[RMDB]
RNA sequence: GGGAACGACUCGAGUAGAGUCGAAAAGAUAUGGAGGCUGGACAUGAUUAGAUUCGGAAACGAAUUGGGAUCAACAGCCAGCUCCUAAGUCAAAACAAUUGAGCCAGGUUCGCCUGGCUCAAUUGAACUCAGUACUAUUCUUCGGAAUAGUACUGAGAAAAGAAACAACAACAACAAC
Reactivity to DMS in 0.01 (KOAc 150mM, MgCl2 10mM, bicine 150mM(pH8.5), 24C), signal-to-noise 3, nucleotides 027 to 126: g010a040u030a300u000g000g000a030g020g010c000u000g000g020a030c080a200u000g010a020u000u010a300g000a000u010u010c010g010g000a100a060a210c000g010a000a000u000u000g000g020g000a030u000c010a010a090c160a120g000c000c000a010g000c000u000c000c010u000a040a180g000u000c030a080a060a140a270c000a010a020u000u000g000a030g010c000c000a010g010g000u000u010c220g020c000c000u000g020g000c010u000c010a000a000u000u000g010a060a200
Reactivity to 2A3 in 0.01 (KOAc 150mM, MgCl2 10mM, bicine 150mM(pH8.5), 24C), signal-to-noise 2, nucleotides 027 to 126: g020a030u090a060u090g040g000a010g230g220c010u030g000g020a080c030a240u110g020a040u050u010a010g020a050u020u000c020g040g020a030a080a070c030g000a040a030u060u050g250g300g050a010u000c020a020a130c030a040g080c000c000a000g000c010u000c010c000u010a150a020g080u030c020a000a010a130a230c000a020a040u000u000g000a010g020c000c010a030g040g040u060u150c290g160c040c030u000g020g000c010u000c000a000a000u000u000g000a000a000